[RMDB]
RNA sequence: GGGAACGACUCGAGUAGAGUCGAAAACGGCGGCCCACCCCACGCCUGACCGAGCCCCUGCUGACCGCUCGGCGCGUUCGGAUCGGGCCACGAGGCCGGGGUGCGCAACUGCGUCGCGUCAGCCUGAAGCCACUAAUUACUUCGGUAAUUAGUGGCUAAAAGAAACAACAACAACAAC
Reactivity to 2A3 in 0.01 (KOAc 150mM, MgCl2 10mM, bicine 150mM(pH8.5), 24C), signal-to-noise 1, nucleotides 027 to 126: c000g020g010c010g000g040c000c000c000a040c000c000c000c020a020c070g000c000c010u040g000a110c020c080g030a030g040c000c000c010c040u040g060c000u020g030a030c020c040g020c040u080c040g120g000c050g000c010g030u050u020c010g000g020a080u090c050g010g000g010c000c000a060c050g040a070g070g000c020c000g000g010g010g000u080g050c040g000c050a120a090c080u200g030c050g080u090c030g000c030g090u030c000a030g000c040c030u000g080a040
Reactivity to DMS in 0.01 (KOAc 150mM, MgCl2 10mM, bicine 150mM(pH8.5), 24C), signal-to-noise 3, nucleotides 027 to 126: c050g010g010c080g060g030c010c030c020a120c020c000c000c040a050c210g010c020c040u000g020a130c100c030g010a190g010c000c040c030c070u010g020c040u010g000a050c120c150g010c050u000c150g000g000c040g030c050g000u010u010c060g010g000a050u000c180g000g000g000c000c050a030c110g000a110g010g010c030c110g000g010g030g020u000g010c190g000c070a140a050c090u010g020c060g040u060c010g010c080g000u000c050a110g000c000c070u000g000a180